The record gives the reactivity of an RNA of 207 nucleotides to 2A3 and DMS. It was measured as part of the RMDB library SHPKNT. DMS adducts were read by reverse transcription with MarathonRT. For 2A3, 7,456 sequencing reads were counted.
RNA sequence: GGGAACGACUCGAGUAGAGUCGAAAAGGGCUGUAGUGCGCUAUGCCGAUCGGGUGUCCGCACUAAGUUCGGCAUCAAUAUGGUGACCUCCCGGGAGCGGGGGACCACCAGGUUGCCUAAGGAGGGGUGAACCGGCCCAGGUCGGAAACGGAGCAGGCAUUGUAUCAGUGUUCGCACUGAUACAAUGAAAAGAAACAACAACAACAAC
Reactivity to 2A3 in 0.01 (KOAc 150mM, MgCl2 10mM, bicine 150mM(pH8.5), 24C), signal-to-noise 6, nucleotides 027 to 156: g050g010g010c070u070g040u130a030g030u030g050c040g010c080u070a040u130g040c010c000g070a150u070c070g050g000g000u040g050u040c040c080g020c010a020c010u040a030a080g040u030u050c040g000g010c000a010u030c010a040a190u100a090u180g020g010u020g020a100c000c000u050c000c020c000g020g070g040a160g100c100g020g000g010g010g040a060c120c000a000c000c000a000g000g020u010u020g000c000c000u040a070a040g060g020a030g000g060g000g000u040g030a070a030c050c010g020g000c000c000c000a020g020g040u020c010g010g000a020a060a080c060g030g010a030g040c020a020g080g000
Reactivity to DMS in 0.01 (KOAc 150mM, MgCl2 10mM, bicine 150mM(pH8.5), 24C), signal-to-noise 3, nucleotides 027 to 156: g010g010g030c040u000g040u010a050g010u010g000c030g070c120u000a060u000g030c010c000g020a060u000c060g010g030g030u000g000u010c130c060g050c030a070c030u000a030a130g010u000u000c090g010g010c000a030u000c040a070a090u000a090u000g020g010u010g000a040c020c000u000c000c000c010g010g000g030a150g030c020g010g000g020g020g010a020c010c000a020c010c010a030g010g040u000u000g000c000c030u000a100a100g010g010a150g020g020g000g020u010g000a060a070c020c040g020g030c010c000c030a060g030g010u000c020g000g000a050a090a100c040g000g000a090g020c020a080g000g000